[RMDB]
This 177-nucleotide RNA was probed chemically with 2A3 and DMS. For 2A3 the reverse transcriptase was SuperScript II with manganese. For DMS the reverse transcriptase was MarathonRT. The reactions ran in a buffer of 150 mM KOAc, 10 mM MgCl2 and 150 mM bicine (pH 8.5), at 24 C.
RNA sequence: GGGAACGACUCGAGUAGAGUCGAAAACAGGUCGGAUUGGAGUUGGGCGUCGGUGGCGCCGUACUCGGCCUCACCGAACCCGCCGAACAGCACCGCGCCGUUGUCGACGGUGAUCUCGGCACUACACCACGGGAGUGUCGUUCGCGACACUCCCGUGAAAAGAAACAACAACAACAAC
Reactivity to 2A3 in 0.01 (KOAc 150mM, MgCl2 10mM, bicine 150mM(pH8.5), 24C), signal-to-noise 2, nucleotides 027 to 126: c110a020g000g060u090c050g000g030a210u100u250g050g010a190g030u130u190g020g040g000c200g130u040c000g000g040u020g000g020c050g000c010c000g050u050a120c150u090c080g010g010c000c000u000c000a000c000c020g000a030a030c020c010c000g000c020c010g040a040a070c060a010g100c000a000c000c000g000c010g040c000c030g030u060u010g130u090c040g000a160c000g020g050u070g090a120u070c040u030c020g000g020c030a030c080u070a020c030a050c060
Reactivity to DMS in 0.01 (KOAc 150mM, MgCl2 10mM, bicine 150mM(pH8.5), 24C), signal-to-noise 1, nucleotides 027 to 126: c070a060g000g140u000c050g030g010a080u000u000g000g110a280g000u210u060g000g000g000c140g000u030c000g000g000u000g030g000c300g050c020c000g000u000a180c300u040c030g040g000c000c000u000c050a000c020c000g000a030a170c030c040c000g010c000c000g000a090a030c290a130g000c090a000c050c040g050c040g000c040c120g000u000u000g000u010c000g000a080c000g000g010u000g030a000u000c170u000c020g020g000c080a220c160u000a070c220a230c160